[RMDB]
RNA sequence: GGGAACGACUCGAGUAGAGUCGAAAAAAGGUAGGCCUCCGUGCCUCAGCCUUCUUAGACUUUAUCACUGAUGAAUCGCUGUGUCUCAGGAGCUGCUGGCCAGACUGGCUUAAUUGUUAAUUUGUGCAGAGUCAUUGAGGUAUGGGUGGCAGGUCGCGUAGCACUCCUUAUUCGUAAGGAGUGCUACAAAAGAAACAACAACAACAAC
Reactivity to DMS in 0.01 (KOAc 150mM, MgCl2 10mM, bicine 150mM(pH8.5), 24C), signal-to-noise 1, nucleotides 027 to 156: a090a020g000g040u000a070g000g040c000c010u010c150c100g030u000g030c010c000u000c020a060g020c060c030u000u010c020u010u010a190g010a070c030u000u000u100a070u000c030a170c060u000g000a070u010g000a090a060u000c080g030c010u020g020u000g010u000c030u000c070a180g040g010a090g010c060u010g010c080u000g000g000c000c010a100g000a070c040u000g040g000c030u000u000a060a050u000u010g020u010u010a060a210u010u010u010g010u010g020c090a070g030a110g020u010c060a160u000u000g010a050g030g030u000a050u000g000g010g030u000g050g010c040a070g010g000u000c010g000c220
Reactivity to 2A3 in 0.01 (KOAc 150mM, MgCl2 10mM, bicine 150mM(pH8.5), 24C), signal-to-noise 6, nucleotides 027 to 156: a000a020g110g000u090a050g020g040c010c000u050c060c030g020u090g000c000c010u030c010a020g030c010c000u030u020c020u030u040a030g020a010c020u080u150u150a160u250c080a080c140u160g080a120u090g090a210a090u140c100g010c220u110g020u020g030u150c000u010c030a020g020g010a020g010c040u070g000c020u070g040g000c000c010a040g070a130c100u070g010g030c000u050u060a110a080u150u050g060u100u110a100a130u080u070u170g080u080g030c030a010g010a040g140u060c030a080u090u060g010a000g000g010u040a020u050g060g030g030u100g020g010c010a000g020g040u070c030g000c030